[RMDB]
RNA sequence: GGGAACGACUCGAGUAGAGUCGAAAAGAUAUGGAGAAAAAUUGGAUGUCCGUUCAGGGAGCUGACAUCUCGGAAACGAGAUGUAGCUUUGAUCUGACUGCGGACAUCCAAUUUUUCUCCUAAGUCAGAAAUAAUGACUGUUCGCAGUCAUUAUUUCAAAAGAAACAACAACAACAAC
Reactivity to DMS in 0.01 (KOAc 150mM, MgCl2 10mM, bicine 150mM(pH8.5), 24C), signal-to-noise 3, nucleotides 027 to 126: g000a060u000a300u000g000g000a020g020a010a010a010a010a010u000u000g000g020a020u000g000u000c000c000g020u000u000c010a000g010g020g010a010g020c000u010g010a030c020a000u000c000u000c000g000g010a120a110a230c000g010a000g010a010u000g020u000a040g000c000u000u010u010g000a080u020c020u000g000a040c300u000g030c010g010g000a000c020a000u010c000c000a010a000u000u000u000u000u000c010u000c010c000u000a010a080g010u010c040a210

Annotation:
An RNA of 177 nucleotides, treated with DMS and read out base by base. It was measured as part of the RMDB library TTRINS. For DMS, 2,940 sequencing reads were counted. Reactivities are given for positions 27 through 126. Values are in units of 0.01, from 0 to 300, in steps of 10.